Chemical mapping of a 177-nucleotide RNA with DMS and 2A3. Source: RMDB library TTRDEL, as collected in RNAgym. Conditions: 150 mM KOAc, 10 mM MgCl2 and 150 mM bicine (pH 8.5), 24 C. Values cover nucleotides 27 to 126.
RNA sequence: GGGAACGACUCGAGUAGAGUCGAAAAGAUAUGGACGCCUACCGUUCGACGAUCUCGGAAACGAGGGAGAACGUAGUGCGUCCUAAGUCAAAACCGUAUCAGCACACUUCGGUGUGCUGAUACGGAAGCAUUAAAAACAGUUCGCUGUUUUUAAUGCAAAAGAAACAACAACAACAAC
Reactivity to DMS in 0.01 (KOAc 150mM, MgCl2 10mM, bicine 150mM(pH8.5), 24C), signal-to-noise 5, nucleotides 027 to 126: g000a040u010a300u000g000g010a010c000g010c010c000u000a000c100c150g020u000u000c000g000a070c250g000a030u010c010u000c000g000g000a110a100a220c000g000a010g000g000g000a030g000a010a010c010g010u000a000g010u020g020c000g010u000c000c000u000a010a080g010u000c040a060a070a120a170c000c000g000u000a000u000c000a000g000c000a000c000a010c000u010u010c190g020g000u000g010u010g010c000u000g010a000u000a000c000g000g000a020a050
Reactivity to 2A3 in 0.01 (KOAc 150mM, MgCl2 10mM, bicine 150mM(pH8.5), 24C), signal-to-noise 6, nucleotides 027 to 126: g010a020u070a050u160g000g000a000c010g010c000c000u050a080c150c190g020u010u000c030g130a260c010g000a160u020c000u000c010g000g040a100a080a060c020g000a000g000g010g010a020g000a000a000c000g000u000a000g060u120g050c000g000u000c000c000u000a010a010g030u000c010a000a010a070a110c000c000g000u000a000u010c000a000g020c020a000c010a000c030u100u200c300g160g000u000g000u000g010c020u000g000a000u000a000c010g000g000a000a000